[RMDB]
RNA sequence: GGGAACGACUCGAGUAGAGUCGAAAAGCUGAGUAUACGAGGUUACUUCAUUCUCGUAUGCAUGAUUGGACAAAUUAAAAUCUCAAUUUGGAUCAGGGCCUCCCUCCAGCGACGGCCGAACAUACAAAACUGUACAUGGAUUCGUCCAUGUACAGUUAAAAGAAACAACAACAACAAC
Reactivity to DMS in 0.01 (KOAc 150mM, MgCl2 10mM, bicine 150mM(pH8.5), 24C), signal-to-noise 6, nucleotides 027 to 126: g010c020u000g010a180g020u000a010u000a000c000g010a020g010g020u010u000a080c240u010u010c200a080u000u010c000u000c000g010u000a010u000g020c020a100u000g000a050u000u000g000g020a070c030a010a030a040u000u000a060a080a080a090u020c150u000c120a030a030u000u000u000g000g000a140u000c040a060g010g000g000c020c020u000c010c010c030u010c100c010a020g000c050g000a090c130g000g010c030c010g010a040a050c110a080u000a140c160a050a040
Reactivity to 2A3 in 0.01 (KOAc 150mM, MgCl2 10mM, bicine 150mM(pH8.5), 24C), signal-to-noise 4, nucleotides 027 to 126: g010c010u030g040a000g020u010a010u010a020c010g010a000g010g060u090u100a110c040u170u230c080a090u140u060c010u000c010g000u010a000u000g000c020a050u110g020a050u020u120g050g010a010c020a010a030a020u090u120a080a130a140a250u090c070u030c130a010a050u050u040u050g100g010a150u060c040a030g010g000g120c000c000u000c000c000c000u050c020c020a000g000c000g040a040c040g020g010c000c010g010a020a020c030a010u180a070c050a030a130